[RMDB]
An RNA of 177 nucleotides, treated with 2A3 and DMS and read out base by base. For DMS the reverse transcriptase was MarathonRT. For 2A3 the reverse transcriptase was SuperScript II with manganese. The DMS profile rests on 5,391 reads. The reactions ran in a buffer of 150 mM KOAc, 10 mM MgCl2 and 150 mM bicine (pH 8.5), at 24 C.
RNA sequence: GGGAACGACUCGAGUAGAGUCGAAAAACCUCUAAGUUCGCUUAGAGGUAAUGAACGCUGCUAAAAGCAGCGCGCUCAGCGGAGCACGCAAAAGCAACGCAAGAACACCAUUCUUCGGAAUGGUGAAGUUAAAUAAAUCUUUCGAGAUUUAUUUAACAAAAGAAACAACAACAACAAC
Reactivity to 2A3 in 0.01 (KOAc 150mM, MgCl2 10mM, bicine 150mM(pH8.5), 24C), signal-to-noise 4, nucleotides 027 to 126: a010c000c000u000c010u010a010a020g000u040u130c150g050c110u000u000a000g000a010g000g000u020a000a060u080g010a080a030c020g000c000u000g000c030u090a140a090a050a060g000c000a010g000c000g010c010g000c010u060c040a030g020c030g050g010a030g010c040a020c090g110c050a030a060a020a090g000c010a020a020c010g010c030a030a040g070a120a020c000a000c000c000a000u000u010c000u030u060c250g100g000a010a000u000g000g000u000g000a000a010
Reactivity to DMS in 0.01 (KOAc 150mM, MgCl2 10mM, bicine 150mM(pH8.5), 24C), signal-to-noise 5, nucleotides 027 to 126: a060c000c000u000c000u000a000a010g020u000u010c220g020c000u010u000a010g010a010g010g020u000a010a010u010g020a090a110c010g000c000u000g000c000u010a060a070a090a170g000c030a030g000c010g010c090g000c040u000c040a160g010c060g000g010a300g010c020a060c100g010c120a060a070a190a070g000c010a030a170c030g010c060a130a110g000a120a110c010a000c000c000a010u000u000c000u000u010c200g020g000a010a010u000g000g000u000g000a010a070